Chemical mapping of a 177-nucleotide RNA with DMS and 2A3.
[RMDB]
RNA sequence: GGGAACGACUCGAGUAGAGUCGAAAAGCUCCAGCCGCUCACCAGGGCGCGGGGCGUCGCCAGCGCCUGCUUGUAGGCUUCCAUGGAGCGGUCGUCGGUGAGCAGCCCGCGCGAGUCGAGGACGAAGAAUUGGUACGGGAUUCGUCCCGUACCAAUUAAAAGAAACAACAACAACAAC
Reactivity to DMS in 0.01 (KOAc 150mM, MgCl2 10mM, bicine 150mM(pH8.5), 24C), signal-to-noise 2, nucleotides 027 to 126: g000c040u010c010c030a180g020c050c020g000c010u000c040a080c110c050a150g020g000g010c030g000c020g010g000g030g010c050g000u000c070g060c010c030a180g000c000g000c020c000u000g010c100u030u020g020u000a120g010g000c050u000u000c050c040a130u000g020g000a040g010c030g000g000u000c030g010u000c050g020g020u010g010a040g010c030a120g020c040c020c040g040c040g000c020g000a070g020u000c030g010a060g010g000a060c030g020a130a070g000
Reactivity to 2A3 in 0.01 (KOAc 150mM, MgCl2 10mM, bicine 150mM(pH8.5), 24C), signal-to-noise 1, nucleotides 027 to 126: g030c030u000c020c040a040g020c060c020g060c040u000c030a100c020c060a040g020g060g000c020g000c010g060g100g030g040c050g130u060c060g000c010c010a000g000c000g030c030c030u060g100c100u110u100g090u180a050g090g060c000u090u110c070c010a080u110g060g020a030g010c030g000g020u030c000g030u010c070g000g060u090g000a000g020c020a000g080c020c040c000g020c030g000c030g010a030g000u050c040g010a030g090g000a000c030g040a020a060g020

Conditions: 150 mM KOAc, 10 mM MgCl2 and 150 mM bicine (pH 8.5), 24 C. Source: RMDB library OK2TST, as collected in RNAgym.